[RMDB]
RNA sequence: GGGAACGACUCGAGUAGAGUCGAAAACGUCCUUCCCUUUUCUUAUUAUUCCGAGGAUGUUUCCCAGCCAGGGAUUUUCAUCCUCGAGUUUCUUGAUGGUUCUCCUGCUCUUCCGGAGCUUUCUUUCAAAUAAGGUAGGGUUCGCCCUACCUUAUUUAAAAGAAACAACAACAACAAC
Reactivity to DMS in 0.01 (KOAc 150mM, MgCl2 10mM, bicine 150mM(pH8.5), 24C), signal-to-noise 1, nucleotides 027 to 126: c130g000u010c040c060u000u000c010c000c010u000u000u000u010c080u000u010a090u000u010a110u000u010c140c020g020a040g010g010a010u000g000u000u000u000c000c000c010a170g020c270c300a160g010g000g000a010u000u000u000u020c000a020u000c000c010u000c010g000a060g020u000u000u010c050u020u000g010a120u010g000g010u000u010c030u000c010c060u000g010c040u000c010u000u010c140c100g020g020a100g000c060u000u000u000c010u000u000u000c020